[RMDB]
The data come from the RNA Mapping Database (RMDB), library OK2TRN.
The record gives the reactivity of an RNA of 177 nucleotides to DMS and 2A3.
The DMS profile rests on 21,147 reads.
The RNA was probed in 150 mM KOAc, 10 mM MgCl2 and 150 mM bicine (pH 8.5) at 24 C.
As a SHAPE reagent, 2A3 marks flexible, mostly unpaired nucleotides at the ribose 2'-OH.
RNA sequence: GGGAACGACUCGAGUAGAGUCGAAAAAAGACGGAAAGAUCGUGCAUCCGACGUUGGGCAUCAGCACCCGGUCAGUAAGCAACGCGAUCGCGUCGGGCGCGCAGGUGGCCAAUGUAAAGGCGGGAAGCCACCAUCAAUUAUUCGUAAUUGAUGGUGGAAAAGAAACAACAACAACAAC
Reactivity to DMS in 0.01 (KOAc 150mM, MgCl2 10mM, bicine 150mM(pH8.5), 24C), signal-to-noise 9, nucleotides 027 to 126: a070a090g010a220c040g000g000a090a070a090g010a080u000c040g010u010g010c080a140u000c030c020g010a040c010g030u000u000g010g000g010c020a050u010c060a130g010c040a110c010c010c010g010g010u010c110a160g020u010a090a190g010c100a100a080c120g010c050g000a090u000c070g010c090g010u000c010g010g000g010c050g010c090g010c110a060g020g020u000g000g000c010c020a030a030u010g010u000a040a060a070g010g010c040g010g000g000a100a140g010
Reactivity to 2A3 in 0.01 (KOAc 150mM, MgCl2 10mM, bicine 150mM(pH8.5), 24C), signal-to-noise 8, nucleotides 027 to 126: a010a000g080a020c050g030g040a090a060a040g090a080u120c060g050u070g040c020a070u040c020c020g010a010c020g020u060u020g010g000g010c010a030u020c030a040g010c010a040c000c010c000g000g030u080c040a040g060u110a110a010g040c060a090a140c120g020c040g090a120u160c080g000c000g020u040c000g000g000g000c080g000c050g000c060a050g000g020u020g030g080c000c010a010a010u050g010u080a070a030a040g060g010c040g010g030g010a030a010g040